Chemical mapping of a 177-nucleotide RNA with DMS and 2A3. For 2A3, 4,577 sequencing reads were counted. The data come from the RNA Mapping Database (RMDB), library OK1LIB. High DMS reactivity at an A or C suggests that its Watson-Crick edge is free. The RNA was probed in 150 mM KOAc, 10 mM MgCl2 and 150 mM bicine (pH 8.5) at 24 C. Reactivities are given for positions 27 through 126.
RNA sequence: GGGAACGACUCGAGUAGAGUCGAAAACGGUCGAAGGAUAUUAUAAUGACCGCUUUUGGUGGAGAAUGCAGUUUUAGGAAUUGAUUCCUAGUCCAUUUCUAUUUGGUGAAAUCCUUUUGCCAUACCGCACCCAUACGUGGUUCGCCACGUAUGGGUGAAAAGAAACAACAACAACAAC
Reactivity to DMS in 0.01 (KOAc 150mM, MgCl2 10mM, bicine 150mM(pH8.5), 24C), signal-to-noise 2, nucleotides 027 to 126: c110g020g050u000c080g020a040a030g000g000a020u010a090u010u000a110u020a170a140u070g020a050c000c000g020c080u030u000u010u060g010g030u020g020g000a040g000a060a020u000g060c070a080g000u030u020u010u010a080g000g000a000a060u000u010g000a160u020u000c000c000u000a060g000u010c070c010a030u000u000u010c050u000a070u000u010u000g000g000u000g020a020a020a030u010c010c000u000u000u000u000g000c020c000a120u000a170c060c070g010
Reactivity to 2A3 in 0.01 (KOAc 150mM, MgCl2 10mM, bicine 150mM(pH8.5), 24C), signal-to-noise 7, nucleotides 027 to 126: c030g000g030u050c020g020a030a010g050g020a010u030a050u140u270a170u100a220a190u190g080a040c010c010g030c020u150u150u100u170g110g010u030g020g030a090g050a100a080u110g090c120a120g060u070u050u080u090a020g010g020a040a060u060u160g050a170u170u090c020c020u030a020g030u000c010c000a010u020u060u060c050u050a170u110u070u130g090g000u090g070a050a060a070u000c000c000u000u010u010u070g000c010c000a030u060a090c000c020g020